The record gives the reactivity of an RNA of 177 nucleotides to 2A3 and DMS. Source: RMDB library OK2TST, as collected in RNAgym. For 2A3 the reverse transcriptase was SuperScript II with manganese. The reactions ran in a buffer of 150 mM KOAc, 10 mM MgCl2 and 150 mM bicine (pH 8.5), at 24 C.

RNA sequence: GGGAACGACUCGAGUAGAGUCGAAAACUUUUUUGUAUAGCGCCAUCGCACAGCAUCCGCACUACAACACUAUCCGCACCACUGGCAGAGCAGAAGCGACCAUCCUGGCGGAUAUCGCUCAUCAGUAAAUAUAAUCCAGUUUCGACUGGAUUAUAUUAAAAGAAACAACAACAACAAC
Reactivity to 2A3 in 0.01 (KOAc 150mM, MgCl2 10mM, bicine 150mM(pH8.5), 24C), signal-to-noise 4, nucleotides 027 to 126: c010u130u100u050u020u230u230g140u120a180u060a130g040c010g020c030c010a040u070c010g010c030a040c010a030g000c000a030u040c000c010g000c020a020c040u100a030c020a070a010c010a040c050u060a060u040c020c010g010c010a020c000c020a030c040u000g050g010c030a010g010a010g050c040a030g040a180a000g050c000g030a030c040c000a010u010c000c020u040g090g030c050g010g000a020u010a040u060c020g010c010u000c040a120u050c020a040g070u140a010
Reactivity to DMS in 0.01 (KOAc 150mM, MgCl2 10mM, bicine 150mM(pH8.5), 24C), signal-to-noise 7, nucleotides 027 to 126: c040u000u010u010u010u010u000g010u010a120u010a090g010c060g010c040c040a040u000c070g020c060a070c070a060g010c060a040u000c050c050g020c050a070c080u000a050c080a050a060c080a070c080u000a070u000c050c040g020c060a090c060c040a050c070u000g000g020c100a070g000a140g010c080a080g010a100a070g010c040g000a040c080c100a040u000c030c020u010g010g010c160g000g000a030u010a060u000c050g020c010u000c050a090u010c070a070g010u000a050